[RMDB]
RNA sequence: GGGAACGACUCGAGUAGAGUCGAAAAGAAGCUGAAGUCGUCCAGCUUGAGUUUGUAGGCGCUCUCGUAGCGCUUCGUGACAGCGUCGAACUCGCCCGUUUCGAUAGACUUGGCAUAGUCUGCCUGAGAGUAUCACUAUCUUCGGAUAGUGAUACUCAAAAGAAACAACAACAACAAC
Reactivity to DMS in 0.01 (KOAc 150mM, MgCl2 10mM, bicine 150mM(pH8.5), 24C), signal-to-noise 4, nucleotides 027 to 126: g000a020a030g010c000u000g010a090a090g020u020c050g000u000c050c020a050g010c020u010u010g000a080g020u010u020u010g000u040a040g000g000c020g000c000u000c020u040c220g020u060a010g010c000g020c000u000u010c010g000u030g000a090c070a080g010c050g000u010c020g000a030a080c030u000c050g010c020c000c050g010u000u000u000c050g020a040u000a070g020a050c050u010u020g000g020c050a140u040a090g010u030c130u010g000c040c000u000g000a190
Reactivity to 2A3 in 0.01 (KOAc 150mM, MgCl2 10mM, bicine 150mM(pH8.5), 24C), signal-to-noise 9, nucleotides 027 to 126: g100a010a000g000c010u030g010a100a020g080u050c030g030u020c030c010a000g000c010u050u060g020a030g030u050u100u140g150u180a060g030g000c000g000c010u010c010u050c140g220u300a010g010c020g000c050u020u010c010g010u030g040a040c040a060g030c030g030u030c020g020a020a020c000u010c020g030c010c010c010g020u060u110u110c080g020a080u050a120g070a070c010u060u030g020g000c000a010u020a060g110u060c100u050g030c010c000u040g030a050